[RMDB]
RNA sequence: GGGAACGACUCGAGUAGAGUCGAAAAAGAUCGAUUACGAUCGAUCAAUGAUGCCCCUCACCCACCUCUGAAGGUCCCAGGUGGGCGAGGGAACGGAGCACGGGAUCACGAGCAGUACGCUGCUCGAAAAAGAACUAGACCUUCGGGUCUAGUUCAAGAUGUGUAAAGAGUUCGCUCUUUACACAUCAAAAGAAACAACAACAACAAC
Reactivity to DMS in 0.01 (KOAc 150mM, MgCl2 10mM, bicine 150mM(pH8.5), 24C), signal-to-noise 1, nucleotides 027 to 156: a130g010a000u000c010g030a030u000u000a120c280g000a140u000c000g000a060u000c030a300a130u020g040a210u000g010c050c000c000c050u020c010a090c000c010c000a020c030c000u000c040u030g010a110a120g000g000u010c010c020c020a070g000g010u000g000g000g010c030g000a010g030g010g020a000a010c030g000g000a140g020c060a100c110g030g010g000a110u010c040a210c000g000a050g000c000a030g030u000a060c300g030c000u000g060c000u000c000g000a000a010a020a120a030g010a010a000c000u010a020g030a030c010c000u000u000c300g070g040g020u000c010u000a000g020u000u000c000a060a110
Reactivity to 2A3 in 0.01 (KOAc 150mM, MgCl2 10mM, bicine 150mM(pH8.5), 24C), signal-to-noise 4, nucleotides 027 to 156: a010g010a010u000c000g000a000u050u090a090c210g050a040u010c000g000a000u010c020a020a070u170g090a040u160g070c000c000c000c000u000c000a010c000c000c000a000c000c000u020c030u100g080a170a020g030g000u000c030c000c000a000g000g000u000g000g000g000c000g000a000g000g010g000a010a060c080g060g080a050g080c110a070c130g000g000g000a010u020c030a010c050g000a000g000c000a000g030u070a040c210g010c110u000g000c000u000c000g010a000a000a000a000a000g010a000a000c000u000a010g000a000c010c000u020u190c240g030g000g000u020c000u000a000g000u010u000c000a000a000